[RMDB]
RNA sequence: GGGAACGACUCGAGUAGAGUCGAAAACUUCUAGUGAACCUGCGCCACCAGGAGCCAUGACAAAUGCAUCUGCAAGUUCUGCCAUUUUAUUUUUACGUUCAUGCAUAGAAUCAACUAAAAUUAAUUCCACACGCGCAGGAUUCGUCCUGCGCGUGUGAAAAGAAACAACAACAACAAC
Reactivity to 2A3 in 0.01 (KOAc 150mM, MgCl2 10mM, bicine 150mM(pH8.5), 24C), signal-to-noise 2, nucleotides 027 to 126: c080u140u040c000u030a120g090u000g190a020a030c000c000u000g000c000g060c000c000a060c010c000a080g230g000a020g000c000c000a250u220g060a030c050a010a070a030u140g000c010a150u080c000u080g000c000a010a100g010u180u050c030u030g040c050c070a040u000u090u020u130a150u050u120u000u100u020a110c150g060u000u010c010a040u190g140c080a080u040a080g020a080a200u100c030a000a000c140u280a080a080a020a080u150u160a040a040u050u060c000
The record gives the reactivity of an RNA of 177 nucleotides to 2A3.
The 2A3 profile rests on 525 reads.